[RMDB]
RNA sequence: GGGAACGACUCGAGUAGAGUCGAAAAGAAUAUAAGAGCGCAGUAAAUGUGAGAGCAAACUGCGCCCGGACUGUAGGAUCCGGUGGCACAGCAACGCUCACUCACAACACGCUGUGCCACAUGAAGAACCACCCAUAUAGUUCGCUAUAUGGGUGGUAAAAGAAACAACAACAACAAC
Reactivity to DMS in 0.01 (KOAc 150mM, MgCl2 10mM, bicine 150mM(pH8.5), 24C), signal-to-noise 5, nucleotides 027 to 126: g010a130a080u020a070u010a050a070g000a080g000c000g010c000a010g020u000a080a090a090u010g010u000g000a100g020a140g000c050a070a090a050c000u000g010c000g000c010c010c000g010g000a050c100u010g050u000a110g000g010a220u000c010c010g000g010u010g000g000c000a010c000a000g010c010a180a090c230g000c050u000c080a060c110u030c200a100c240a090a090c250a090c200g010c000u000g010u000g000c010c000a000c010a040u010g010a100a060g000a140
Reactivity to 2A3 in 0.01 (KOAc 150mM, MgCl2 10mM, bicine 150mM(pH8.5), 24C), signal-to-noise 8, nucleotides 027 to 126: g040a070a030u210a010u040a130a030g020a020g000c000g000c000a000g000u050a050a100a100u060g010u050g030a050g010a010g060c050a060a150a040c000u000g000c000g000c000c010c000g000g010a010c020u130g090u260a060g080g070a080u010c010c010g020g000u010g000g000c000a000c000a010g000c010a050a120c080g020c030u040c020a060c030u110c010a100c040a060a180c040a020c130g000c010u000g000u000g000c000c000a000c010a040u160g030a040a060g050a050